[RMDB]
RNA sequence: GGGAACGACUCGAGUAGAGUCGAAAAUUCGACGAGUACUUCGGUGCCGCCGUCGACGCAGGUGUCCGGCAGGUGGUGAUCCUCGCUGCCGGACUGGACGCUCGGGCCUACCGCCUGAACUGGCCGGUCUCUCCAAAGUCUUCGGACUUUGGAGAGAAAAAGAAACAACAACAACAAC
Reactivity to DMS in 0.01 (KOAc 150mM, MgCl2 10mM, bicine 150mM(pH8.5), 24C), signal-to-noise 2, nucleotides 027 to 126: u000u000c040g000a060c000g020a270g000u000a050c010u000u030c130g060g030u000g000c020c050g020c170c010g000u000c010g000a040c250g050c130a060g000g030u000g010u000c000c010g020g010c040a010g050g000u000g020g020u020g010a090u030c020c010u000c040g020c000u000g000c010c000g000g000a070c010u000g010g010a110c050g000c030u000c040g010g000g000c050c000u050a100c050c050g010c000c010u000g000a100a090c090u000g040g000c070c070g020g000
Reactivity to 2A3 in 0.01 (KOAc 150mM, MgCl2 10mM, bicine 150mM(pH8.5), 24C), signal-to-noise 2, nucleotides 027 to 126: u080u020c000g010a000c000g000a010g070u050a040c000u060u160c180g080g010u060g040c000c020g060c040c040g040u010c030g000a010c040g020c090a070g000g140u030g030u040c000c020g010g000c010a010g010g000u030g010g070u200g190a220u280c000c010u030c050g240c050u000g000c000c000g040g000a000c010u000g000g020a000c010g010c020u030c040g080g000g000c000c000u010a080c030c020g020c000c020u050g010a140a050c020u040g030g000c040c010g060g000